[RMDB]
Structure probing data (2A3) for a 207-nucleotide construct. The RNA was probed in 150 mM KOAc, 10 mM MgCl2 and 150 mM bicine (pH 8.5) at 24 C. It was measured as part of the RMDB library OK3TST.
RNA sequence: GGGAACGACUCGAGUAGAGUCGAAAAGCCAGGAAAAAGGGGACGUCGCCUCGUGGCUCCAGCAACCCUGGUGCCUGGUCCCUUCCUGUCUCACUGGACCCUGCCUCUUAGGGUCAGUGGCUCCUGGCCUCUCCUCCUGACCACUGAGAUGCUGGAACUCCCCUAGUGAGUUCGCUCACUAGGGGAGAAAAGAAACAACAACAACAAC
Reactivity to 2A3 in 0.01 (KOAc 150mM, MgCl2 10mM, bicine 150mM(pH8.5), 24C), signal-to-noise 1, nucleotides 027 to 156: g000c000c000a000g010g030a100a000a000a000a030g050g020g020g000a000c030g120u220c100g070c030c020u050c030g040u020g000g010c030u060c030c030a000g000c060a020a080c080c000c000u020g000g040u020g010c000c000u090g030g050u010c000c000c000u000u050c000c050u050g060u130c020u000c020a020c000u070g290g000a170c000c000c000u040g030c030c030u160c030u130u290a010g000g000g010u000c000a000g030u000g030g010c000u030c010c000u000g010g030c000c000u020c000u020c000c010u100c030c020u080g080a110c000c050a040c090u080g030a020g040a210u210g060c020u220g020g100a040a020